[RMDB]
RNA sequence: GGGAACGACUCGAGUAGAGUCGAAAAGGCUUGUAUGGUUCAGGUUACCUGCGGUAGCAUGACUCUUAAUGGUCUUUGGCUUGACAACACAGUCUGGUGCCCACGACACGUAAUGUGCCCGGCUGACGAAUCGGGCUGUUCGCAGCCCGAAAAAGAAACAACAACAACAAC
Reactivity to 2A3 in 0.01 (KOAc 150mM, MgCl2 10mM, bicine 150mM(pH8.5), 24C), signal-to-noise 4, nucleotides 027 to 129: g010g000c010u100u100g070u100a050u110g010g010u040u030c030a000g010g000u010u040a020c000c000u090g150c140g040g010u010a000g000c010a010u030g000a030c000u010c010u110u120a050a020u160g000g000u000c000u020u020u010g040g020c010u010u030g020a030c010a090a050c050a020c020a080g000u000c030u060g000g020u080g070c010c010c030a040c010g120a040c010a020c070g050u150a120a120u160g020u020g030c020c000c000g000g000c000u040g010a090c040g020a010a020
Reactivity to DMS in 0.01 (KOAc 150mM, MgCl2 10mM, bicine 150mM(pH8.5), 24C), signal-to-noise 6, nucleotides 027 to 129: g000g000c020u030u010g040u050a020u040g020g060u000u000c010a000g000g010u000u030a050c060c030u050g040c220g020g020u060a040g000c050a060u020g010a050c010u070c000u000u040a110a200u030g000g000u000c070u050u050u020g000g050c070u000u050g020a100c120a040a110c190a110c020a000g060u000c010u060g030g020u020g010c020c070c040a080c110g000a130c090a100c010g030u000a150a080u050g020u000g040c030c020c050g000g040c080u040g010a080c130g000a070a110